[RMDB]
RNA sequence: GGGAACGACUCGAGUAGAGUCGAAAAAUACUAAGCCUCAUAUCAACUGAACAGUCUAUCUUCUUCAAGGAACGCUUCGUUCACCAUCAACUCAAUCAAAAUGACUCCCUGCUCCGCAACACCUGCUCGUACCCAAAACAUUCGUGUUUUGGGUACGAAAAGAAACAACAACAACAAC
Reactivity to 2A3 in 0.01 (KOAc 150mM, MgCl2 10mM, bicine 150mM(pH8.5), 24C), signal-to-noise 6, nucleotides 027 to 126: a000u170a020c060u090a040a020g020c000c010u070c010a040u050a050u060c040a050a080c030u070g030a020a030c010a050g050u010c010u070a100u010c010u060u000c020u080u080c060a060a060g090g000a110a010c040g020c060u060u060c040g050u030u020c010a030c080c000a040u040c020a020a070c030u020c060a040a080u040c030a030a070a020a160u160g050a060c010u020c010c000c000u010g010c010u000c020c010g030c010a030a040c010a040c030c000u010g010c000u000
Reactivity to DMS in 0.01 (KOAc 150mM, MgCl2 10mM, bicine 150mM(pH8.5), 24C), signal-to-noise 1, nucleotides 027 to 126: a130u080a180c120u000a050a060g000c010c040u000c070a190u020a020u020c190a120a070c060u010g000a140a050c190a010g010u000c040u000a040u050c120u000u000c040u050u000c080a090a090g000g000a050a020c090g000c040u000u000c060g000u000u000c000a080c190c000a070u000c010a010a070c230u040c120a000a090u000c090a110a010a030a050u060g000a130c040u000c130c000c000u100g070c100u030c000c110g000c030a000a030c160a000c010c000u000g020c040u000